[RMDB]
RNA sequence: GGGAACGACUCGAGUAGAGUCGAAAAGCGUAUUUUUUUAUGCAAUUUAAAUGCCAGCGGCUAAGCUUUAAGACAACCAGUCUAACGGAUUGACCGCUUUUCCUCUUUGUCUUAUUUCAAAGUAUAGAUGGCUAAUUGAAUUCGUUCAAUUAGCCAUAAAAGAAACAACAACAACAAC
Reactivity to 2A3 in 0.01 (KOAc 150mM, MgCl2 10mM, bicine 150mM(pH8.5), 24C), signal-to-noise 5, nucleotides 027 to 126: g040c030g010u010a050u030u100u020u030u020u060u070a160u150g070c040a020a020u050u090u150a110a070a000u070g020c000c010a000g010c010g050g020c030u060a140a040g020c020u060u030u090a050a000g010a010c010a040a170c150c040a060g010u000c000u000a050a000c060g020g020a020u020u030g080a170c000c010g000c000u050u000u010u010c000c000u040c020u030u000u020g020u010c050u080u150a180u060u140u090c040a040a020a000g020u020a090u090a270g170
Reactivity to DMS in 0.01 (KOAc 150mM, MgCl2 10mM, bicine 150mM(pH8.5), 24C), signal-to-noise 4, nucleotides 027 to 126: g000c070g030u000a000u000u010u030u050u030u000u000a050u030g000c090a070a100u020u000u020a010a050a060u000g010c050c060a050g010c040g000g020c010u000a040a030g000c000u000u000u010a190a040g000a030c040a070a140c270c210a120g010u010c000u010a040a110c240g010g000a030u000u010g010a070c020c010g000c010u000u000u000u010c010c010u010c060u000u000u000g010u000c160u000u000a100u020u010u010c020a020a000a050g010u020a090u010a100g000